[RMDB]
RNA sequence: GGGAACGACUCGAGUAGAGUCGAAAAAUCGGCCCGUUCGCGGGCCGAUACAGGCGCAGGCUCGCACCUAGCGACCGGCGCAAGGACGCACGGUACUGCGAAUUGACUGUGGAUUCGUCCACAGUAAAUGACGUAUGUCAUUCGUGACAUACGUCAUAAAAGAAACAACAACAACAAC
Reactivity to DMS in 0.01 (KOAc 150mM, MgCl2 10mM, bicine 150mM(pH8.5), 24C), signal-to-noise 5, nucleotides 027 to 126: a030u000c010g010g000c010c000c000g040u000u010c160g020c020g010g010g020c000c000g000a000u000a010c160a110g010g010c000g010c010a020g000g000c180u000c030g020c020a100c160c100u010a160g010c010g000a050c020c010g000g000c000g000c020a080a050g010g010a130c040g010c020a050c100g000g010u010a080c150u000g000c010g000a090a110u010u010g010a040c000u000g010u000g000g000a020u000u010c190g010u000c000c010a000c000a000g000u000a020a070
Reactivity to 2A3 in 0.01 (KOAc 150mM, MgCl2 10mM, bicine 150mM(pH8.5), 24C), signal-to-noise 4, nucleotides 027 to 126: a000u010c010g030g020c030c050c010g010u030u030c210g000c020g080g010g010c010c000g010a000u000a000c000a030g150g000c020g000c010a010g020g030c100u040c040g000c010a060c040c150u060a030g010c000g020a020c000c010g000g010c000g000c010a030a070g120g010a050c020g030c050a070c100g090g110u170a120c070u050g000c010g070a080a080u100u190g070a020c000u000g000u010g000g010a020u030u060c190g070u020c030c010a000c000a000g000u010a020a070

An RNA of 177 nucleotides, treated with DMS and 2A3 and read out base by base. DMS adducts were read by reverse transcription with MarathonRT. Source: RMDB library M2PK50, as collected in RNAgym. The reactions ran in a buffer of 150 mM KOAc, 10 mM MgCl2 and 150 mM bicine (pH 8.5), at 24 C.